[RMDB]
RNA sequence: GGGAACGACUCGAGUAGAGUCGAAAACUUGUAGUCGUAGGGAAACCGAUAUGCCCGCAGCUUUGUUGAGGGGCAAGGUCUUAAUAGGGCCUGGAAUCACAGCAUUGAAACCCGAAGCCGGUCGAUCGUAUAGCAGCGAAUUCGUUCGCUGCUAUACAAAAGAAACAACAACAACAAC
Reactivity to 2A3 in 0.01 (KOAc 150mM, MgCl2 10mM, bicine 150mM(pH8.5), 24C), signal-to-noise 3, nucleotides 027 to 126: c010u040u100g080u100a020g050u000c040g030u060a070g000g090g020a110a170a030c020c020g070a060u030a080u170g050c000c000c060g010c030a010g000c030u010u160u210g030u100u050g010a080g000g000g000g000c020a010a040g010g000u010c030u140u180a170a150u170a160g020g020g000c000c000u000g000g020a010a010u020c000a000c000a070g080c000a020u000u110g050a110a050a040c030c000c020g000a020a000g020c050c010g020g030u050c030g020a030u050c030
Reactivity to DMS in 0.01 (KOAc 150mM, MgCl2 10mM, bicine 150mM(pH8.5), 24C), signal-to-noise 3, nucleotides 027 to 126: c040u000u010g040u010a020g060u000c040g030u000a100g000g010g000a120a080a120c040c050g000a170u020a070u010g030c000c040c020g030c140a050g000c050u000u030u010g020u000u000g000a080g000g010g020g000c030a060a000g010g010u010c030u000u010a120a110u030a120g020g000g020c000c050u000g000g030a080a090u000c070a060c040a060g010c020a010u000u010g000a070a070a140c030c010c030g000a070a120g000c050c060g000g010u010c040g020a090u030c110